[RMDB]
RNA sequence: GGGAACGACUCGAGUAGAGUCGAAAAGAGUAUAGCUUCGGCUAUACUCAAAACACUACAUGCAGCGCUCUACGUGUGUAGUGACAGUAAGCGCGCAAAUAAAAACGACAGGGUUCGCCCUGUCGAACCUCAAUGCGGAGUUCGCUCCGCAUUGAGGAAAAGAAACAACAACAACAAC
Reactivity to 2A3 in 0.01 (KOAc 150mM, MgCl2 10mM, bicine 150mM(pH8.5), 24C), signal-to-noise 1, nucleotides 027 to 126: g020a000g010u010a000u000a020g000c000u000u050c300g070g020c000u000a010u010a000c000u000c000a000a000a000a000c010a000c010u060a000c000a060u030g000c030a020g000c040g040c030u070c090u160a050c110g140u050g000u020g040u090a090g020u040g100a020c020a030g160u210a080a030g080c030g000c010g050c050a000a170a090u130a020a060a000a040a020c000g000a000c000a000g080g000g020u040u100c160g140c020c000c020u000g020u010c000g010a000a010